[RMDB]
RNA sequence: GGGAACGACUCGAGUAGAGUCGAAAAGCAGUUAAACGCUACAACAGGAUUGGUGCUGAAGGUAUGACAUCAGAAGCGGUUGACGGACGUAGCAAUGCGUAUGAAUUGAACGAUUUCAAGGAGUAUGAGUUGCUCGUGUAUUCGUACACGAGCAACUAAAAGAAACAACAACAACAAC
Reactivity to 2A3 in 0.01 (KOAc 150mM, MgCl2 10mM, bicine 150mM(pH8.5), 24C), signal-to-noise 1, nucleotides 027 to 126: g000c000a010g000u100u110a060a100a000c110g000c020u030a020c010a160a000c010a030g060g000a140u010u080g020g140u010g000c010u030g020a050a010g170g030u180a070u180g070a060c000a110u080c020a010g030a060a010g050c000g110g000u060u040g060a050c010g080g020a000c020g070u030a010g060c080a030a030u080g000c000g000u030a010u000g050a050a030u070u000g020a050a000c180g050a190u060u130u000c020a070a000g040g000a010g050u030a080u080g080
Reactivity to DMS in 0.01 (KOAc 150mM, MgCl2 10mM, bicine 150mM(pH8.5), 24C), signal-to-noise 2, nucleotides 027 to 126: g020c000a040g020u000u010a100a120a050c140g000c000u010a140c130a060a090c120a120g010g010a110u000u000g000g040u000g000c040u000g010a080a080g000g000u010a060u020g000a120c090a010u000c040a090g010a120a040g000c100g000g000u000u010g000a130c100g010g010a060c050g010u000a070g010c080a040a040u000g000c070g030u000a010u000g000a230a170u000u000g000a010a070c300g000a090u000u000u000c030a020a020g000g030a290g010u000a050u000g000